[RMDB]
RNA sequence: GGGAACGACUCGAGUAGAGUCGAAAAGUCAGCUUUUUAGUGCAAUGGUUGUUCGUAAGCCAGCUGAUCUUUUCUUAAAUGAAAUUGGUGUUCCUUACGAAGAUGAGGGUGAUUAUGUUGUGGUCAACACGACUAUAGCAUUCGUGCUAUAGUCGUGAAAAGAAACAACAACAACAAC
Reactivity to 2A3 in 0.01 (KOAc 150mM, MgCl2 10mM, bicine 150mM(pH8.5), 24C), signal-to-noise 3, nucleotides 027 to 126: g000u010c000a000g010c000u200u100u070u180u300a120g020u160g100c040a100a160u140g130g000u030u030g030u140u080c050g050u070a050a000g010c000c000a020g000c010u000g010a050u100c010u030u010u010u000c000u020u120a170a220a160u160g140a110a100a090u090u070g080g000u060g010u030u010c000c000u010u030a050c040g060a050a030g040a110u130g050a040g060g040g040u080g100a080u040u210a050u110g030u050u030g000u020g000g050u050c000a020a020
Reactivity to DMS in 0.01 (KOAc 150mM, MgCl2 10mM, bicine 150mM(pH8.5), 24C), signal-to-noise 3, nucleotides 027 to 126: g020u000c010a010g000c030u010u020u000u000u000a100g020u000g000c150a110a150u000g010g020u000u010g030u020u000c080g030u000a060a070g000c050c060a060g010c010u000g000a010u000c030u000u000u000u000c020u010u000a070a090a120u000g020a060a060a150u010u010g020g030u000g000u000u010c030c020u000u000a060c070g030a030a030g000a070u000g000a080g010g000g000u000g000a090u000u010a130u000g010u000u000g010u000g010g010u010c070a060a110
Chemical mapping of a 177-nucleotide RNA with 2A3 and DMS. The data come from the RNA Mapping Database (RMDB), library OK2TST. Reactivities are given for positions 27 through 126. The DMS profile rests on 3,531 reads. The RNA was probed in 150 mM KOAc, 10 mM MgCl2 and 150 mM bicine (pH 8.5) at 24 C.